[RMDB]
RNA sequence: GGGAACGACUCGAGUAGAGUCGAAAAAGGAAACUAAUCUAUCUCCCUGCAAAAUGCUGCCAAGCAACAUCGUCUAGAUCUUAAAUAUAAGAUCAAGCCGAAGUUGGUUUGCUGCACUUUGCUGGGAUCUUCUAUCUUACUUCGGUAAGAUAGAAGAAAAAGAAACAACAACAACAAC
Reactivity to 2A3 in 0.01 (KOAc 150mM, MgCl2 10mM, bicine 150mM(pH8.5), 24C), signal-to-noise 9, nucleotides 027 to 126: a000g180g020a090a070a030c100u110a110a110u090c050u060a110u050c050u010c010c000c000u010g000c000a000a010a000a010u000g000c010u020g000c010c020a010a010g030c000a010a010c000a030u000c000g010u000c000u010a030g010a010u000c000u030u050a140a260a150u300a160u030a090a010g000a000u000c010a020a000g000c010c000g010a030a010g000u000u010g100g280u000u000u000g000c010u020g000c000a000c010u010u000u000g000c020u030g000g000g000a000
Reactivity to DMS in 0.01 (KOAc 150mM, MgCl2 10mM, bicine 150mM(pH8.5), 24C), signal-to-noise 5, nucleotides 027 to 126: a070g010g000a070a080a120c080u010a100a150u020c050u010a100u020c110u000c000c000c000u000g000c000a010a010a000a000u010g010c010u000g000c050c060a010a030g000c010a010a010c000a080u000c010g000u010c000u000a090g010a000u000c000u000u000a040a140a130u040a110u020a010a010g010a010u000c000a070a030g000c030c000g000a010a040g020u000u000g000g000u010u010u000g000c000u000g000c000a010c040u000u000u000g000c000u010g000g000g000a010
This 177-nucleotide RNA was probed chemically with 2A3 and DMS. High 2A3 reactivity points to a flexible backbone, as in loops and unpaired stretches. The RNA was probed in 150 mM KOAc, 10 mM MgCl2 and 150 mM bicine (pH 8.5) at 24 C. For DMS the reverse transcriptase was MarathonRT.